Chemical mapping of a 177-nucleotide RNA with DMS and 2A3. The RNA was probed in 150 mM KOAc, 10 mM MgCl2 and 150 mM bicine (pH 8.5) at 24 C. For 2A3, 8,064 sequencing reads were counted.
RNA sequence: GGGAACGACUCGAGUAGAGUCGAAAACCAACGUGGUUCGCCACGUUGGAAACAACAAUUACUGUCAGUUGAGACAGACACAAAAACUGUCAGUGUAGACAGAAAGGCGGUCCUUCGGGACCGCCAAGUACCACAUUAAGUUCGCUUAAUGUGGUACAAAAGAAACAACAACAACAAC
Reactivity to DMS in 0.01 (KOAc 150mM, MgCl2 10mM, bicine 150mM(pH8.5), 24C), signal-to-noise 4, nucleotides 027 to 126: c000c000a010a010c000g030u000g000g000u010u010c250g010c000c000a010c000g000u000u000g000g000a040a090a070c080a080a070c110a100a100u010u010a100c010u000g000u000c000a130g010u000u000g010a200g000a020c030a020g000a110c150a060c160a070a060a090a070a060c020u000g010u010c000a090g010u010g010u000a110g000a020c020a030g000a080a090a100g000g010c000g000g010u000c020c000u010u020c180g030g010g010a010c020c000g010c010c000a010a020
Reactivity to 2A3 in 0.01 (KOAc 150mM, MgCl2 10mM, bicine 150mM(pH8.5), 24C), signal-to-noise 4, nucleotides 027 to 126: c010c000a000a010c000g010u010g010g060u040u070c170g050c060c000a000c000g000u010u000g000g020a030a030a000c020a010a010c010a040a090u220u120a180c000u010g010u010c020a120g040u110u110g110a040g010a100c010a020g070a030c050a010c010a150a160a010a070a030c000u000g000u000c000a030g110u040g050u190a050g020a020c020a010g080a080a030a010g010g000c010g000g030u000c000c000u050u120c160g050g000g010a000c000c000g010c000c000a000a000